[RMDB]
An RNA of 177 nucleotides, treated with DMS and 2A3 and read out base by base. 2A3 adducts were read by reverse transcription with SuperScript II with manganese. Conditions: 150 mM KOAc, 10 mM MgCl2 and 150 mM bicine (pH 8.5), 24 C. DMS adducts were read by reverse transcription with MarathonRT.
RNA sequence: GGGAACGACUCGAGUAGAGUCGAAAAUGACCUACCAGGCUGCGGUGCGGCUCGCCGCACAGGUCAUCCCUCAUCGGGCGCGUCCUGCGUCCUUCCACGCCAACCCACAAGGGAUCUUCCUCCCUUGUUGAUAGGUGCCUUUCGAGGCACCUAUCAAAAAAGAAACAACAACAACAAC
Reactivity to DMS in 0.01 (KOAc 150mM, MgCl2 10mM, bicine 150mM(pH8.5), 24C), signal-to-noise 2, nucleotides 027 to 126: u010g000a130c020c000u020a130c180c090a140g000g020c080u000g070c140g010g010u000g000c000g020g000c070u030c130g020c000c000g050c000a100c110a000g000g010u010c000a010u000c010c000c000u030c090a120u000c150g000g010g040c080g000c040g020u020c080c020u010g010c000g000u000c010c000u000u000c060c090a030c090g000c040c020a050a150c090c030c040a120c000a030a010g000g000g000a060u030c020u030u010c120c090u020c000c000c000u000u000g010
Reactivity to 2A3 in 0.01 (KOAc 150mM, MgCl2 10mM, bicine 150mM(pH8.5), 24C), signal-to-noise 4, nucleotides 027 to 126: u070g020a010c000c000u020a070c050c080a090g100g000c080u030g010c010g030g000u020g010c060g070g000c070u070c100g050c000c000g000c000a010c010a000g010g000u000c010a040u030c000c010c010u040c050a120u100c040g030g000g020c020g010c000g060u220c050c060u110g010c000g000u010c000c000u030u010c010c010a050c030g010c000c000a040a030c030c000c000a010c010a020a010g010g010g020a030u040c060u150u080c020c020u020c010c000c000u000u010g020
Background
As a SHAPE reagent, 2A3 marks flexible, mostly unpaired nucleotides at the ribose 2'-OH. For 2A3, 4,262 sequencing reads were counted. For DMS, 2,237 sequencing reads were counted.